RNA sequence: GGGAACGACUCGAGUAGAGUCGAAAACGCUGGGACCAUCGGGGUCGAGCCAAGACAUGCUUGCCCACUGAAGCGCGCACGGUGGAGAGCAACAGCUUGGCUCGACUCUCUAGCGUGUGGUCCUGUGCUGAAGCGCGCACGGCAACCGAAAGGUGCGGGUUUUACAUUUCUUCGGAAAUGUAAAACCAAAAGAAACAACAACAACAAC
Reactivity to DMS in 0.01 (KOAc 150mM, MgCl2 10mM, bicine 150mM(pH8.5), 24C), signal-to-noise 1, nucleotides 027 to 156: c040g030c040u020g010g010g010a010c020c000a040u000c040g020g000g010g040u000c030g010a030g000c030c000a080a020g000a110c050a170u000g010c030u010u000g000c070c010c010a090c030u020g030a040a090g030c000g040c010g030c010a300c000g000g020u000g040g020a300g000a090g010c010a070a050c070a050g010c000u010u000g010g000c010u000c000g000a010c000u000c000u000c010u000a140g010c180g000u000g020u020g010g020u020c010c010u000g010u010g040c000u020g010a130a060g020c040g000c030g020c010a300c050g000g000c030a130a140c070c000g010a070a130a160g000g040u000g030c020g000
Reactivity to 2A3 in 0.01 (KOAc 150mM, MgCl2 10mM, bicine 150mM(pH8.5), 24C), signal-to-noise 2, nucleotides 027 to 156: c040g000c000u020g000g010g010a000c000c000a010u020c040g020g000g020g000u000c000g010a000g000c000c000a010a010g020a190c180a290u090g040c040u050u020g010c000c000c000a010c010u020g040a290a060g020c020g000c010g000c000a020c010g030g000u000g000g030a110g020a000g030c000a010a030c020a010g030c000u000u000g000g010c000u000c000g000a000c000u000c000u000c000u020a050g040c030g080u300g000u010g100g000u000c000c000u030g070u060g020c030u100g030a100a000g000c000g020c010g000c030a000c030g100g010c030a140a170c020c010g050a100a040a010g020g000u030g000c000g020